Overview:
Structure probing data (2A3) for a 177-nucleotide construct. Reactivities are rounded to 0.1 and cut off at 0 and 3. The RNA was probed in 150 mM KOAc, 10 mM MgCl2 and 150 mM bicine (pH 8.5) at 24 C.
[RMDB]
RNA sequence: GGGAACGACUCGAGUAGAGUCGAAAAACAGCAGGAGGAUACGUCCUCCUGCUGACAUCCAGGGGAAACACUUCCACAUGAGCUAGAUUACGGAAACCUGUGUGCAUAAAGGCUUCUGCUACAUUAAUUGCUAGAUUGGCUUCGGCCAAUCUAGCAAAAAAGAAACAACAACAACAAC
Reactivity to 2A3 in 0.01 (KOAc 150mM, MgCl2 10mM, bicine 150mM(pH8.5), 24C), signal-to-noise 1, nucleotides 027 to 126: a000c000a000g000c000a000g000g000a000g000g000a000u000a030c120g110u070c000c030u000c000c000u000g010c000u000g000a000c070a000u010c040c000a000g000g060g040g010a070a080a000c020a010c150u120u000c000c000a040c050a170u030g000a100g010c000u000a000g000a130u090u110a070c030g000g020a030a030a030c000c000u030g000u130g010u020g090c010a110u220a090a290a030g000g000c010u000u000c000u170g040c010u090a000c020a150u190u210a160a100